[RMDB]
RNA sequence: GGGAACGACUCGAGUAGAGUCGAAAACACGGGAAGGUGUCGCAGCGCAGGUGGGGCGCGAUCUCAUCCGUGCACACGGCGCACACGUCGCCCUCGUCGCUCCCCCCGUCCUCUCGAGGGGGGGCGCUCCAGUUCGGAGUUUCGACUCCGAACUGGAAAAAGAAACAACAACAACAAC
Reactivity to 2A3 in 0.01 (KOAc 150mM, MgCl2 10mM, bicine 150mM(pH8.5), 24C), signal-to-noise 3, nucleotides 027 to 126: c070a050c030g010g000g010a230a230g050g010u020g030u050c020g040c080a100g000c010g000c040a080g290g000u040g020g090g070g020c020g000c030g040a120u040c020u000c080a150u050c050c020g020u010g010c040a000c000a000c020g010g010c010g000c020a030c000a010c100g010u020c000g010c010c020c000u030c010g070u060c010g000c010u020c000c000c000c000c000c000g080u130c030c060u150c050u120c060g020a280g000g000g020g020g000g000g000c010g000c020
Reactivity to DMS in 0.01 (KOAc 150mM, MgCl2 10mM, bicine 150mM(pH8.5), 24C), signal-to-noise 1, nucleotides 027 to 126: c300a140c050g000g020g020a060a020g000g060u000g010u010c060g000c260a030g000c000g020c060a000g070g020u020g000g040g000g040c040g000c000g100a060u000c000u050c220a060u010c010c000g030u000g000c000a020c060a190c020g000g010c080g000c000a020c020a300c040g000u000c050g000c010c000c000u040c080g000u000c060g030c000u030c000c000c000c000c000c000g000u030c090c040u000c220u000c000g000a090g010g010g000g000g000g000g000c010g000c210

The record gives the reactivity of an RNA of 177 nucleotides to 2A3 and DMS. The reactions ran in a buffer of 150 mM KOAc, 10 mM MgCl2 and 150 mM bicine (pH 8.5), at 24 C. The DMS profile rests on 1,363 reads. 2A3 adducts were read by reverse transcription with SuperScript II with manganese. The 2A3 profile rests on 2,265 reads.